[RMDB]
The record gives the reactivity of an RNA of 207 nucleotides to 2A3 and DMS.
RNA sequence: GGGAACGACUCGAGUAGAGUCGAAAAGCUAGUGGACUUCGGUCCACUAGCAAAGAUAUGGAGCAUUUAGGACAUGCUAUAAAUGGUCGGAAACGACCAUGUAGCAACAGCCUACGGAUGCUCCUAAGUCAAAGAGUGAACCCUUCGGGGUUCACUCCAAAUUCUAUGCCUUCGGGCAUAGAAUUUGAAAAGAAACAACAACAACAAC
Reactivity to 2A3 in 0.01 (KOAc 150mM, MgCl2 10mM, bicine 150mM(pH8.5), 24C), signal-to-noise 2, nucleotides 027 to 156: g020c000u000a000g000u010g000g000a010c010u040u070c300g060g010u020c000c010a010c000u000a000g000c000a010a010a000g000a000u020a010u080g000g000a000g010c000a000u010u020u010a020g010g000a070c160a200u300g020c000u040a010u030a040a300a050u010g020g000u000c000g000g010a000a030a010c010g000a000c040c030a000u010g010u000a010g000c050a040a060c010a120g000c000c000u020a040c080g070g010a000u000g000c000u000c000c000u000a010a000g000u000c010a110a030a130g000a000g000u000g000a000a000c000c000c030u000u060c250g010g000g030g000u010u000c000a000c000u000c000
Reactivity to DMS in 0.01 (KOAc 150mM, MgCl2 10mM, bicine 150mM(pH8.5), 24C), signal-to-noise 1, nucleotides 027 to 156: g000c000u010a000g030u000g000g010a000c010u010u010c300g050g030u000c000c000a000c000u010a020g010c020a000a010a050g010a140u000a170u010g020g020a060g060c010a030u000u010u010a050g010g020a020c030a300u010g010c030u000a030u000a050a060a020u000g120g010u000c000g040g000a120a140a200c020g050a010c000c000a050u000g000u010a000g030c000a030a040c110a120g030c060c010u000a110c220g010g010a020u000g020c010u010c010c000u000a000a080g010u010c030a080a120a230g000a050g040u010g010a030a020c000c000c020u000u010c300g070g000g010g010u000u000c000a000c010u000c000

For DMS, 2,487 sequencing reads were counted. Conditions: 150 mM KOAc, 10 mM MgCl2 and 150 mM bicine (pH 8.5), 24 C. It was measured as part of the RMDB library RNAMAK.